Structure probing data (DMS and 2A3) for a 177-nucleotide construct. It was measured as part of the RMDB library OK1LIB. 2A3 adducts were read by reverse transcription with SuperScript II with manganese.
RNA sequence: GGGAACGACUCGAGUAGAGUCGAAAACAAUACUCUGCUGCUUUCUCUCGUGCCAUGUCCCCCACCCUGGACGCACUCACCCAGGCCGUCGUCAACAACACCGUUUUCGGCGUCAACGAUGAAGCAGCCGAUCUCACUAUUUCGAUAGUGAGAUCGGAAAAGAAACAACAACAACAAC
Reactivity to DMS in 0.01 (KOAc 150mM, MgCl2 10mM, bicine 150mM(pH8.5), 24C), signal-to-noise 2, nucleotides 027 to 126: c120a110a080u040a080c070u010c030u010g040c040u000g020c040u010u000u000c050u040c070u020c050g010u010g020c020c020a050u080g000u020c020c000c000c000c030a100c070c030c010u000g010g010a070c140g040c050a070c070u000c050a070c010c000c000a050g000g020c040c030g000u010c020g070u000c050a030a060c170a050a060c100a060c070c080g000u000u000u010u020c060g000g000c020g010u000c100a070a030c100g000a020u020g010a090a060g000c020a120g000
Reactivity to 2A3 in 0.01 (KOAc 150mM, MgCl2 10mM, bicine 150mM(pH8.5), 24C), signal-to-noise 4, nucleotides 027 to 126: c020a020a030u120a140c060u060c060u090g000c020u010g010c000u040u090u040c060u020c000u010c020g030u020g040c020c020a090u110g090u090c000c010c010c010c000a050c000c000c010u020g020g020a020c050g010c040a050c010u040c010a080c020c010c010a000g040g000c020c000g040u040c010g010u000c010a000a020c000a020a030c040a070c010c020g010u010u000u030u060c020g020g010c000g050u060c020a020a020c050g030a030u120g020a030a020g010c020a000g000